[RMDB]
RNA sequence: GGGAACGACUCGAGUAGAGUCGAAAACUUCUGAUCUGCGAUGAGCCCACCUCCGGACUGGACUCCUUUACCGCCCACAGCGUCGUCCAGGUGCUGAAGAAGCUGUCGCAGAAGGGCAAGACCGUCAGGCACAACUCUUAUUCGUAAGAGUUGUGCCAAAAGAAACAACAACAACAAC
Reactivity to DMS in 0.01 (KOAc 150mM, MgCl2 10mM, bicine 150mM(pH8.5), 24C), signal-to-noise 2, nucleotides 027 to 126: c080u000u010c020u000g000a160u000c000u000g020c010g010a020u000g000a060g000c000c020c040a200c220c010u010c020c020g020g030a100c010u000g000g000a020c010u010c210c070u040u000u020a090c180c100g050c000c030c110a130c200a080g030c060g010u010c160g010u000c010c000a000g010g030u000g040c000u010g010a020a040g000a080a230g000c010u000g020u000c040g010c010a040g040a020a160g000g000g000c110a040a040g010a200c030c020g000u000c170a100
Reactivity to 2A3 in 0.01 (KOAc 150mM, MgCl2 10mM, bicine 150mM(pH8.5), 24C), signal-to-noise 2, nucleotides 027 to 126: c020u040u080c010u040g140a300u000c000u010g010c010g010a030u070g300a020g000c000c010c000a110c030c020u080c000c070g030g000a040c000u000g020g000a040c010u080c040c080u150u220u180a120c050c070g040c000c050c010a100c020a040g030c000g080u130c010g010u000c000c000a040g060g080u050g100c000u030g010a070a060g000a000a020g020c010u010g000u000c000g000c020a010g000a000a040g050g030g000c060a020a000g040a060c020c010g100u170c090a070